[RMDB]
Structure probing data (2A3 and DMS) for a 177-nucleotide construct. Reactivities are given for positions 27 through 126. It was measured as part of the RMDB library TTRINS. The DMS profile rests on 16,266 reads. The reactions ran in a buffer of 150 mM KOAc, 10 mM MgCl2 and 150 mM bicine (pH 8.5), at 24 C. For DMS the reverse transcriptase was MarathonRT. 2A3 adducts were read by reverse transcription with SuperScript II with manganese.

RNA sequence: GGGAACGACUCGAGUAGAGUCGAAAAGAUAUGGACGGAUGAACUACGCUUUGGCGUUCCUUGGACCCUUAGGUAUCGGAAACGAUACCUAAGGCUAGGAACGGCAAAGCGCAUCCGUCCUAAGUCACUGUCUAAUAAAGUUCGCUUUAUUAGACAGAAAAGAAACAACAACAACAAC
Reactivity to 2A3 in 0.01 (KOAc 150mM, MgCl2 10mM, bicine 150mM(pH8.5), 24C), signal-to-noise 3, nucleotides 027 to 126: g030a020u100a040u190g000g010a000c010g010g020a000u020g010a140a150c220u220a070c300g020c030u050u050u020g300g180c020g010u000u010c000c010u040u080g260g130a300c010c010c000u010u000a010g000g010u010a000u000c010g050g000a110a080a040c010g000a040u040a110c000c000u000a000a000g000g000c000u010a010g000g010a000a000c000g030g030c000a000a010a000g000c000g000c000a000u010c000c000g000u000c000c000u000a010a000g000u020c010a020
Reactivity to DMS in 0.01 (KOAc 150mM, MgCl2 10mM, bicine 150mM(pH8.5), 24C), signal-to-noise 8, nucleotides 027 to 126: g000a050u000a300u000g010g010a030c010g000g000a020u000g010a120a090c190u020a300c010g000c010u000u000u000g000g000c010g010u000u000c000c000u000u010g020g010a130c300c010c000u000u000a000g000g010u000a000u000c000g000g010a120a110a220c010g010a010u000a000c000c000u000a000a000g000g010c030u000a010g000g000a010a010c000g000g000c010a010a000a010g000c010g010c000a000u000c000c000g010u000c000c000u010a000a060g010u000c040a240